[RMDB]
RNA sequence: GGGAACGACUCGAGUAGAGUCGAAAAGUACCCUUGUUCGCAAGGGUACAAAGUCAGACUUCACUGUCAUAAAGAAGGUAACAUCUCAGUUACAAUAAGAGAAAAGCACCUACUUCGGUAGGUGCAACGAUAAAAGAGACUUCGGUCUCUUUUAUCGAAAAGAAACAACAACAACAAC
Reactivity to DMS in 0.01 (KOAc 150mM, MgCl2 10mM, bicine 150mM(pH8.5), 24C), signal-to-noise 4, nucleotides 027 to 126: g020u000a010c000c000c000u000u000g020u020u010c200g040c010a010a000g000g000g010u000a000c000a030a070a110g000u000c020a040g000a090c030u000u000c040a040c070u000g000u010c110a100u000a050a040a080g020a060a050g010g020u000a030a020c020a100u000c050u000c060a120g010u000u000a020c060a080a090u000a080a090g000a060g000a070a080a110a120g000c000a010c000c000u000a000c000u000u010c150g020g000u000a000g000g020u000g010c000a000a020
Reactivity to 2A3 in 0.01 (KOAc 150mM, MgCl2 10mM, bicine 150mM(pH8.5), 24C), signal-to-noise 5, nucleotides 027 to 126: g000u000a000c000c000c000u000u010g050u030u040c130g000c100a000a000g010g000g000u000a000c000a000a000a010g070u050c020a010g020a050c020u040u030c100a060c200u060g060u110c020a060u240a130a130a010g090a040a030g080g000u020a010a010c010a080u070c070u020c130a040g010u010u030a010c020a060a100u180a190a040g130a010g060a040a090a050a020g010c000a010c010c000u000a000c000u020u060c230g070g000u000a000g020g000u010g000c000a000a000